The record gives the reactivity of an RNA of 177 nucleotides to 2A3. The 2A3 profile rests on 721 reads. For 2A3 the reverse transcriptase was SuperScript II with manganese.
RNA sequence: GGGAACGACUCGAGUAGAGUCGAAAAGAGCCUAGAAGCGCCCACGGCGGCUGGAGGAGACAGGGCGGCACCGAGGGUCGGGGCGCAGAGCCUACGGAGGUCAGCUGCACGUGGCAGAGCAGACCGACAGGGUGGGAGGGUUCGCCCUCCCACCCUGAAAAGAAACAACAACAACAAC
Reactivity to 2A3 in 0.01 (KOAc 150mM, MgCl2 10mM, bicine 150mM(pH8.5), 24C), signal-to-noise 1, nucleotides 027 to 126: g020a000g000c000c040u060a170g070a120a100g080c090g000c040c010c000a040c010g040g010c060g020g020c020u060g060g000a030g050g000a080g020a030c010a030g080g000g000c000g000g000c040a010c000c040g020a080g040g090g000u050c070g000g000g000g000c050g000c010a050g000a000g030c010c020u030a090c110g110g030a080g040g030u020c020a090g000c000u050g000c020a000c260g130u130g110g000c040a000g020a080g090c000a020g040a030c000c010g030a030